[RMDB]
The record gives the reactivity of an RNA of 177 nucleotides to 2A3.
It was measured as part of the RMDB library OK1LIB.
The reactions ran in a buffer of 150 mM KOAc, 10 mM MgCl2 and 150 mM bicine (pH 8.5), at 24 C.

RNA sequence: GGGAACGACUCGAGUAGAGUCGAAAACAGCAGGAUGUCCAUGAUACGUUUCGAGUAUCCCUGCCAGAACGACCGGCCGACGAGCCACCGGAACUCGCCUCUGUAGUCGAAGAGUUUGUGAUGGACCCCCUGCAGGACCGUUCGCGGUCCUGCAGGGAAAAGAAACAACAACAACAAC
Reactivity to 2A3 in 0.01 (KOAc 150mM, MgCl2 10mM, bicine 150mM(pH8.5), 24C), signal-to-noise 1, nucleotides 027 to 126: c070a020g080c010a000g010g050a090u060g060u000c040c000a040u100g020a040u000a010c050g090u110u130u130c050g030a040g030u040a010u010c000c000c000u020g000c020c000a070g000a070a000c070g070a070c030c020g040g030c000c030g110a210c050g040a000g000c010c100a010c090c030g000g000a030a110c050u060c030g100c020c000u000c010u060g130u060a040g110u060c040g060a130a000g050a040g140u070u050u110g000u010g090a040u010g000g000a020c000c010